Structure probing data (2A3 and DMS) for a 177-nucleotide construct. Values cover nucleotides 27 to 126. DMS (dimethyl sulfate) methylates the pairing face of unpaired adenines and cytosines. For DMS the reverse transcriptase was MarathonRT. The 2A3 profile rests on 739 reads. The RNA was probed in 150 mM KOAc, 10 mM MgCl2 and 150 mM bicine (pH 8.5) at 24 C. 2A3 adducts were read by reverse transcription with SuperScript II with manganese.
[RMDB]
RNA sequence: GGGAACGACUCGAGUAGAGUCGAAAACAUAUCGCCAUCACUGGCAGCUUGCUGGAGGGAUUUGGUGGGAGCAUGGAUCAGGCGGUUGGUUAGCUUAUGGGCCAGUUCAUUUACCACCUGUUCAACACACUAGCUACCGGUUCGCCGGUAGCUAGUGAAAAGAAACAACAACAACAAC
Reactivity to 2A3 in 0.01 (KOAc 150mM, MgCl2 10mM, bicine 150mM(pH8.5), 24C), signal-to-noise 1, nucleotides 027 to 126: c000a050u180a040u130c060g050c070c010a010u090c050a070c180u020g000g000c010a000g010c000u010u110g000c040u010g030g030a000g000g090g030a130u200u090u080g000g010u030g000g030g020a000g070c070a060u050g050g010a020u060c000a080g010g010c030g090g010u010u170g000g050u030u070a030g000c010u070u000a090u190g020g000g000c020c010a060g030u040u000c070a030u030u080u120a050c030c020a000c020c020u060g010u080u000c050a050a050c060a000
Reactivity to DMS in 0.01 (KOAc 150mM, MgCl2 10mM, bicine 150mM(pH8.5), 24C), signal-to-noise 1, nucleotides 027 to 126: c060a040u020a060u000c040g000c040c030a030u000c190a130c120u000g000g000c030a040g000c120u000u000g030c030u030g010g020a120g030g010g010a130u000u030u000g010g020u000g020g010g000a090g030c190a040u000g020g000a040u000c060a040g000g010c070g010g010u000u000g000g010u000u010a070g050c040u000u020a070u020g010g030g000c010c000a090g000u000u000c040a040u010u010u010a120c030c020a030c030c010u000g000u010u000c050a130a110c200a130